Structure probing data (DMS) for a 177-nucleotide construct. For DMS the reverse transcriptase was MarathonRT. Conditions: 150 mM KOAc, 10 mM MgCl2 and 150 mM bicine (pH 8.5), 24 C. Values cover nucleotides 27 to 126.
[RMDB]
RNA sequence: GGGAACGACUCGAGUAGAGUCGAAAAGAUAUGGAGAACUUCCGAUAAGCAGUCCCUCGGAAACGAGGGCUGCUUUUGACGGAACCCCUCCUAAGUCAAAACUGAGUUUACUUCGGUAAACUCAGAACGUUCUUAAUGCGUUCGCGCAUUAAGAACGAAAAGAAACAACAACAACAAC
Reactivity to DMS in 0.01 (KOAc 150mM, MgCl2 10mM, bicine 150mM(pH8.5), 24C), signal-to-noise 2, nucleotides 027 to 126: g010a050u000a280u020g000g000a000g000a230a110c250u010u000c000c000g010a100u000a000a010g000c000a010g010u040c020c000c010u000c000g010g000a040a050a100c020g010a010g010g000g000c000u000g000c000u000u000u040u000g050a250c120g000g010a040a020c170c160c140c000u000c000c010u010a050a140g000u000c090a080a010a080a160c010u000g010a000g000u000u000u000a010c010u000u000c220g020g020u000a000a000a000c000u010c000a000g000a050a090